[RMDB]
RNA sequence: GGGAACGACUCGAGUAGAGUCGAAAAAUGAGACAGAAGAGAAAUCUGGAAAGUGUCUUGUCACUGAGGUAAUGCCAACAUCAACUGUGUUAAAUGUUGCUGAGAAUAGAAAAAUGAUCACUGAAUUGACCAAUUACCAAUGAAUAAAUAAUUACUACCCUAUCCCUAGGUUCGCCUAGGGAUAGGGAAAAGAAACAACAACAACAAC
Reactivity to DMS in 0.01 (KOAc 150mM, MgCl2 10mM, bicine 150mM(pH8.5), 24C), signal-to-noise 1, nucleotides 027 to 156: a060u000g010a100g010a100c030a070g010a160a140g090a260g010a100a110a140u000c000u020g000g010a090a150a030g000u000g010u000c070u000u000g000u000c020a040c120u000g020a110g030g030u000a050a050u030g000c040c020a050a060c030a080u000c030a080a110c070u030g070u020g020u000u000a070a080a130u000g040u000u000g010c000u000g000a150g000a060a050u000a080g050a000a080a140a070a050u000g040a010u030c000a090c050u000g020a050a190u010u000g000a060c070c060a070a050u000u000a110c050c030a030a090u010g000a050a100u000a010a020a090u000a000a080u010u020a150c030u000a100
Reactivity to 2A3 in 0.01 (KOAc 150mM, MgCl2 10mM, bicine 150mM(pH8.5), 24C), signal-to-noise 2, nucleotides 027 to 156: a000u100g000a010g000a000c010a050g060a050a020g060a050g010a050a150a110u010c030u090g030g010a090a130a080g040u020g020u030c030u020u090g030u060c030a010c050u040g020a050g010g000u080a070a030u110g060c000c040a050a000c000a050u040c020a080a050c020u030g000u010g070u060u030a010a110a090u060g010u050u050g020c030u040g030a010g030a170a070u140a090g070a010a060a050a020a040u180g040a000u080c020a000c040u050g070a080a160u020u080g020a020c000c050a040a020u010u050a050c010c030a000a060u040g010a010a000u190a150a080a040u230a090a030u250u190a070c000u250a040
Chemical mapping of a 207-nucleotide RNA with DMS and 2A3. Reactivities are rounded to 0.1 and cut off at 0 and 3. DMS adducts were read by reverse transcription with MarathonRT. 2A3 adducts were read by reverse transcription with SuperScript II with manganese.